[RMDB]
RNA sequence: GGGAACGACUCGAGUAGAGUCGAAAACAUGGGCUCACAAUACGUCACUGCACGUGGAGGAUCCGGUUCGUCCCUCAAACAUUCCCUCACGGUCACGGGCCUCGUGCUACCAGAGUUUUCUGAGUCAAUAAAUGGGCGUGUUCGCACGCCCAUUUAUAAAAGAAACAACAACAACAAC
Reactivity to DMS in 0.01 (KOAc 150mM, MgCl2 10mM, bicine 150mM(pH8.5), 24C), signal-to-noise 1, nucleotides 027 to 126: c170a110u030g000g000g020c130u000c110a140c130a080a100u060a110c030g000u000c020a110c070u020g010c000a020c040g030u040g000g010a200g030g000a130u070c020c030g020g010u000u010c140g000u000c020c000c000u060c040a000a150a150c110a170u000u030c000c000c000u010c060a030c110g000g000u000c000a110c010g000g000g000c010c000u030c000g000u000g000c010u000a130c020c010a200g000a070g000u020u000u000u000c000u050g020a000g000u010c060a170
Reactivity to 2A3 in 0.01 (KOAc 150mM, MgCl2 10mM, bicine 150mM(pH8.5), 24C), signal-to-noise 2, nucleotides 027 to 126: c040a120u170g040g090g000c090u040c000a110c130a050a030u140a100c050g050u010c040a030c280u000g070c040a020c130g050u090g040g000a090g000g040a050u000c020c000g010g000u030u050c070g000u060c030c060c010u060c120a290a220a110c020a050u090u020c020c010c000u000c000a080c010g010g000u020c010a000c000g010g030g000c000c000u040c020g030u060g000c050u020a070c040c020a000g000a000g110u070u020u070u000c020u010g090a070g020u060c050a020
Chemical mapping of a 177-nucleotide RNA with DMS and 2A3. The RNA was probed in 150 mM KOAc, 10 mM MgCl2 and 150 mM bicine (pH 8.5) at 24 C. For DMS the reverse transcriptase was MarathonRT. For 2A3, 573 sequencing reads were counted. The data come from the RNA Mapping Database (RMDB), library OK1LIB.